Chemical mapping of a 177-nucleotide RNA with DMS and 2A3. The 2A3 profile rests on 2,217 reads. DMS adducts were read by reverse transcription with MarathonRT. For 2A3 the reverse transcriptase was SuperScript II with manganese. For DMS, 1,173 sequencing reads were counted.

[RMDB]
RNA sequence: GGGAACGACUCGAGUAGAGUCGAAAAUUCACGCCCCCACAGUUGGGGAUGCACUCUGAUUAGCUAAUUCAUAGAAUGGCUGGUCACUUCAAGGGUGUAUCGGAUUCUGUGGUGAGCCGCCCACGAACCCUCCUCUAUAGUUCGCUAUAGAGGAGGGAAAAGAAACAACAACAACAAC
Reactivity to DMS in 0.01 (KOAc 150mM, MgCl2 10mM, bicine 150mM(pH8.5), 24C), signal-to-noise 2, nucleotides 027 to 126: u010u030c080a110c270g010c030c000c150c000c010a000c040a000g020u000u000g000g010g000g000a010u000g000c010a010c000u000c010u000g000a010u000u000a010g020c020u020a040a050u000u000c040a220u010a170g000a000a000u000g000g010c000u000g000g030u000c000a090c240u010u010c300a130a040g000g000g000u020g000u000a010u040c030g000g000a300u000u000c000u000g020u000g000g010u000g000a040g010c040c130g000c000c020c000a120c130g010a090a110
Reactivity to 2A3 in 0.01 (KOAc 150mM, MgCl2 10mM, bicine 150mM(pH8.5), 24C), signal-to-noise 2, nucleotides 027 to 126: u040u020c040a020c110g020c010c000c000c020c000a000c010a010g000u000u000g000g030g000g000a000u010g000c030a000c000u040c060u160g000a010u000u000a000g000c000u070a290a050u050u000c020a140u140a250g010a030a010u020g010g010c010u000g000g030u020c030a020c070u290u260c140a090a040g020g000g030u000g000u020a000u000c000g010g020a020u020u000c000u000g000u000g030g000u000g000a010g000c000c040g060c000c000c000a040c050g070a030a070